Annotation:
The record gives the reactivity of an RNA of 177 nucleotides to 2A3 and DMS. The 2A3 profile rests on 34,418 reads. The DMS profile rests on 19,361 reads.
[RMDB]
RNA sequence: GGGAACGACUCGAGUAGAGUCGAAAAUGAGUCUAGGACUGUCGAUCUCAUGCGGUACCGAUCGCGUCGUAUCAUGCACGCGAUCGCUAGCUAGUCACGCGUGGUACCGAUCGUACAGUAUAUACUACCAUCUAUUUCUGUUCGCAGAAAUAGAUGGAAAAGAAACAACAACAACAAC
Reactivity to 2A3 in 0.01 (KOAc 150mM, MgCl2 10mM, bicine 150mM(pH8.5), 24C), signal-to-noise 9, nucleotides 027 to 126: u150g020a010g050u030c060u090a050g110g240a030c000u000g000u000c010g010a010u000c030u010c030a010u030g000c010g010g040u030a020c010c010g000a000u000c010g000c010g020u030c050g010u060a120u300c110a120u300g030c080a000c000g000c000g000a010u000c000g000c000u020a040g040c040u080a040g060u050c040a020c110g010c010g010u020g000g050u080a120c060c090g000a000u010c010g020u090a010c000a000g010u000a000u010a000u000a020c020u020a070
Reactivity to DMS in 0.01 (KOAc 150mM, MgCl2 10mM, bicine 150mM(pH8.5), 24C), signal-to-noise 9, nucleotides 027 to 126: u020g000a060g010u000c080u000a060g010g010a030c000u000g000u000c010g010a010u000c010u010c040a030u000g010c020g010g010u000a070c170c010g000a010u000c000g000c020g010u000c150g010u000a100u010c300a120u010g020c070a020c000g000c010g000a010u000c010g010c120u000a060g010c150u010a110g010u010c140a070c040g010c010g020u000g000g010u010a080c300c110g000a020u000c020g010u010a010c010a020g010u000a020u000a080u000a040c030u000a210